RNA sequence: GGGAACGACUCGAGUAGAGUCGAAAACACGGCUGGGCGACACGCUCAAAUUGCGGGAAACCCCUUAGAGCCUCUAGCUACCAAGCCGCCGGUCGAAAGACGGCGGUGGCCAGGUUAAUUCCCUCGGGUACGGUGAUAACGCUAGAGGAUUGGGCAAGAGUAUUAGUGCGUUCGCGCACUAAUACUCAAAAGAAACAACAACAACAAC
Reactivity to 2A3 in 0.01 (KOAc 150mM, MgCl2 10mM, bicine 150mM(pH8.5), 24C), signal-to-noise 1, nucleotides 027 to 156: c060a010c080g090g000c030u000g010g000g040c030g100a160c040a080c100g030c010u040c090a060a080a120u150u110g010c020g010g020g030a090a060a030c010c000c000c030u010u120a120g020a000g150c010c000u000c000u000a020g010c010u000a000c030c130a000a020g000c000c000g000c020c010g100g300u070c010g030a070a060a040g030a010c010g000g000c020g000g020u030g000g000c020c000a000g020g000u000u060a020a000u110u080c000c020c000u040c150g020g000g000u090a200c030g000g020u020g000a020u020a030a010c060g000c000u010a000g010a010g030g040a000u010u090g000g000g000c140a150a080
The data come from the RNA Mapping Database (RMDB), library RSTRND. Structure probing data (2A3) for a 207-nucleotide construct. 2A3 adducts were read by reverse transcription with SuperScript II with manganese. Reactivities are given for positions 27 through 156. The RNA was probed in 150 mM KOAc, 10 mM MgCl2 and 150 mM bicine (pH 8.5) at 24 C.